[RMDB]
RNA sequence: GGGAACGACUCGAGUAGAGUCGAAAAAUAUGUAAGAAGCCCUUGUUACUUAAGUGAACGUGGGCAUUAGAAUGGAUCGUUACUAGUGGGCCAUUUUUGGUAAGCAGAACUGGCGAUGCGGGAUGAAGUCAGUAUAAAAAUUCGUUUUUAUACUGACAAAAGAAACAACAACAACAAC
Reactivity to DMS in 0.01 (KOAc 150mM, MgCl2 10mM, bicine 150mM(pH8.5), 24C), signal-to-noise 7, nucleotides 027 to 126: a100u030a050u020g020u020a080a100g020a150a160g010c000c000c000u010u010g010u000u000a030c010u010u030a170a130g010u030g010a010a020c020g020u000g010g010g020c010a060u010u010a050g010a090a070u020g010g000a080u000c040g010u010u010a080c070u010a040g030u010g010g000g010c020c020a040u000u000u010u010u000g000g020u030a060a110g000c030a030g000a040a060c070u000g000g020c020g000a050u010g000c030g010g000g000a080u010g000a070a120
Reactivity to 2A3 in 0.01 (KOAc 150mM, MgCl2 10mM, bicine 150mM(pH8.5), 24C), signal-to-noise 7, nucleotides 027 to 126: a000u230a080u140g050u040a030a070g070a120a050g050c000c000c000u030u110g020u020u050a150c020u110u140a070a240g130u130g190a010a000c010g010u050g000g030g000c010a020u020u120a030g040a020a040u100g040g030a040u060c010g020u020u050a090c020u040a060g080u070g030g030g020c000c020a070u060u060u040u060u040g080g030u070a060a010g080c010a010g010a070a020c010u010g010g000c000g040a030u050g040c030g010g020g020a030u060g030a090a000